[RMDB]
RNA sequence: GGGAACGACUCGAGUAGAGUCGAAAAGAUAUGGAUGCUCAAUGAUUGAUGACCAUGUGAGAACUCGGAAACGAGACACAUGCAAGAUUGAAGCAUCCUAAGUCAAACAUGCCGUUCGCGGCAUGAACGUAACUAUACGGUUCGCCGUAUAGUUACGAAAAGAAACAACAACAACAAC
Reactivity to 2A3 in 0.01 (KOAc 150mM, MgCl2 10mM, bicine 150mM(pH8.5), 24C), signal-to-noise 8, nucleotides 027 to 126: g010a010u020a010u070g000g000a000u000g000c000u000c010a020a060u120g170a300u170u280g090a130u220g160a180c090c000a020u010g010u010g020a270g100a300a180c010u010c010g000g000a020a020a010c010g010a000g050a050c000a000c000a000u020g030c060a140a100g030a210u010u040g070a140a020g000c000a000u000c000c000u000a020a000g000u010c010a020a080a100c000a010u000g000c020c000g030u070u060c300g000c020g130g000c000a000u000g000a030a010
Reactivity to DMS in 0.01 (KOAc 150mM, MgCl2 10mM, bicine 150mM(pH8.5), 24C), signal-to-noise 7, nucleotides 027 to 126: g000a020u000a150u000g000g010a000u010g010c000u000c020a050a030u010g020a170u000u000g010a090u010g010a160c300c020a000u000g000u000g010a270g010a060a180c000u000c000g000g000a040a030a070c000g010a010g020a150c000a010c000a000u000g000c050a050a030g000a020u000u000g010a110a060g010c010a000u000c000c000u000a010a040g010u010c010a130a090a220c010a010u000g010c000c000g020u000u010c250g000c020g000g000c000a000u000g000a080a170

This 177-nucleotide RNA was probed chemically with 2A3 and DMS. Conditions: 150 mM KOAc, 10 mM MgCl2 and 150 mM bicine (pH 8.5), 24 C. Source: RMDB library TTRDEL, as collected in RNAgym. As a SHAPE reagent, 2A3 marks flexible, mostly unpaired nucleotides at the ribose 2'-OH. Values cover nucleotides 27 to 126.